RNA sequence: GGGAACGACUCGAGUAGAGUCGAAAACGAGUAUUGCCUCUGCAAUAUGAUAAAGGUCCCGAACAUCGGUCAUAGCGCGGCGAGCGCCUCCUUAAGGGUAAAACGGCCUUCAUACAGCGCUUUGCCAAUAAUGGCAGAAUCAAUACCUUCGUCUUCAUCGUAAUUUAAAUUUCGAUUUAAAUUACGAAAAAGAAACAACAACAACAAC
Reactivity to DMS in 0.01 (KOAc 150mM, MgCl2 10mM, bicine 150mM(pH8.5), 24C), signal-to-noise 2, nucleotides 027 to 156: c050g000a240g000u000a040u000u000g010c000c060u000c060u010g000c020a110a110u000a040u010g020a110u000a000a090a130g020g010u000c020c020c070g030a070a090c080a090u010c010g000g050u000c040a030u000a050g010c100g010c130g040g050c050g000a100g010c000g020c020c020u000c020c060u000u010a050a110g000g000g010u000a030a020a090a150c170g000g010c000c010u010u000c080a120u000a090c130a030g010c000g000c000u000u000u000g040c000c020a100a130u000a100a080u000g010g000c010a030g010a040a070u000c010a030a050u000a030c040c060u000u000c060g020u020c010u000u000c040a300
Reactivity to 2A3 in 0.01 (KOAc 150mM, MgCl2 10mM, bicine 150mM(pH8.5), 24C), signal-to-noise 6, nucleotides 027 to 156: c010g000a010g020u010a010u010u010g010c010c040u070c020u040g000c020a050a110u050a070u190g070a060u160a080a170a040g050g030u100c070c060c050g030a100a060c040a140u180c060g010g050u070c030a050u050a070g060c040g020c050g060g030c030g010a010g020c060g020c010c010u100c020c000u110u150a120a140g100g010g020u090a120a120a050a050c060g090g000c000c000u040u030c030a070u070a190c060a030g000c000g020c010u030u080u230g020c020c010a050a070u200a130a040u090g100g000c010a000g010a000a010u040c020a020a010u020a030c000c060u040u070c010g030u050c030u080u070c020a050

Background
Source: RMDB library OK3TST, as collected in RNAgym. This 207-nucleotide RNA was probed chemically with DMS and 2A3. The RNA was probed in 150 mM KOAc, 10 mM MgCl2 and 150 mM bicine (pH 8.5) at 24 C. Values cover nucleotides 27 to 156.